[RMDB]
RNA sequence: GGGAACGACUCGAGUAGAGUCGAAAAGCAACGCAAAGCCGCGGCAAGUGGAGUUAGCGAGAAGAGACUAGGCUUUGUUUUCUUCAAGUGAAGCGGUCACCAAUCAGGUGUGGUAGUUACCGUAAAAAUAACCGCUCUUUGUUCGCAAAGAGCGGAACUAGCUAUCGUUCUUCGGAACGAUAGCUAGAAAAGAAACAACAACAACAAC
Reactivity to 2A3 in 0.01 (KOAc 150mM, MgCl2 10mM, bicine 150mM(pH8.5), 24C), signal-to-noise 1, nucleotides 027 to 156: g030c080a070a010c090g000c030a030a020a140g010c000c010g010c030g120g000c060a030a030g090u070g040g060a100g050u070u130a040g030c040g010a040g060a140a000g040a010g000a020c050u060a030g030g040c000u000u040u070g030u000u090u090u080c030u040u000c070a120a000g000u010g100a080a000g040c000g000g060u040c040a040c020c020a040a080u250c060a050g010g010u060g030u030g070g010u060a040g010u030u140a030c030c000g020u080a000a050a030a050a000u080a140a030c000c000g000c000u000c000u000u000u020g040u040u010c190g010c050a000a000a000g000a000g000c000g000g000a000a000